RNA sequence: GGGAACGACUCGAGUAGAGUCGAAAAGCAUCAAAUGUGGGAGUCAGUGAAGGACGAGCUGAACACUCUUUUGAAAGAGAAUGGUGUGGACCUUAGUGUCGUGGUUGAGAAACAGGAGGGAAUGUACAAGUCGGCACCUAAACGUCUCACCGCCACCAAUGAUAUCACCGUUCGCGGUGAUAUCAUUAAAAGAAACAACAACAACAAC
Reactivity to DMS in 0.01 (KOAc 150mM, MgCl2 10mM, bicine 150mM(pH8.5), 24C), signal-to-noise 2, nucleotides 027 to 156: g020c020a060u000c040a030a050a060u010g010u020g040g020g030a070g030u000c020a050g010u000g000a030a070g020g010a180c080g000a090g060c020u010g000a060a110c120a080c030u000c010u010u000u020u010g000a090a080a120g010a050g000a080a140u000g030g030u000g020u000g030g000a050c030c040u010u000a060g050u000g010u000c040g030u010g040g040u010u000g020a150g020a140a060a060c090a070g030g010a150g010g030g030a060a110u020g010u010a080c050a000a080g000u000c030g000g010c020a030c050c020u000a060a040a110c090g010u000c030u010c030a050c010c000g010c050c050a010c060c050
Reactivity to 2A3 in 0.01 (KOAc 150mM, MgCl2 10mM, bicine 150mM(pH8.5), 24C), signal-to-noise 5, nucleotides 027 to 156: g030c010a030u170c040a080a040a070u170g030u190g060g000g000a010g030u000c020a000g000u010g060a010a020g030g040a000c100g050a030g000c060u050g110a130a000c050a050c030u030c020u010u070u130u250g220a140a090a010g050a000g000a060a090u100g010g010u070g030u120g040g000a000c010c030u050u090a020g000u010g000u060c020g040u060g030g050u070u050g020a030g080a090a130a030c040a040g040g030a040g040g050g070a090a040u100g030u060a040c020a090a020g100u020c020g010g010c010a020c000c020u060a100a080a010c020g020u000c010u010c010a020c000c010g000c020c010a080c010c040